[RMDB]
RNA sequence: GGGAACGACUCGAGUAGAGUCGAAAAUUGGUUAAGUAACUUAGUAGCUUAGCUUCGGAUUUUCGUAACAAAUUUGCUGUUCAGAACACUUCCAUGUACGCGGCAUUGCCGAGCAAUUUGCCCAUUCCCCCAUGGGGUGUUUCGACACCCCAUGGGGAAAAGAAACAACAACAACAAC
Reactivity to 2A3 in 0.01 (KOAc 150mM, MgCl2 10mM, bicine 150mM(pH8.5), 24C), signal-to-noise 2, nucleotides 027 to 126: u030u030g020g020u000u010a000a000g030u000a010a000c120u100u130a050g080u200a000g110c000u040u010a040g020c000u140u120c090g140g010a100u000u000u000u120c010g010u120a030a040c040a020a130a110u170u130u210g010c000u000g060u140u060c050a020g100a100a030c030a030c060u100u000c010c000a050u070g040u050a070c100g000c000g020g020c050a090u030u130g000c000c010g000a010g000c000a000a040u020u010u140g010c000c000c000a010u020u080c020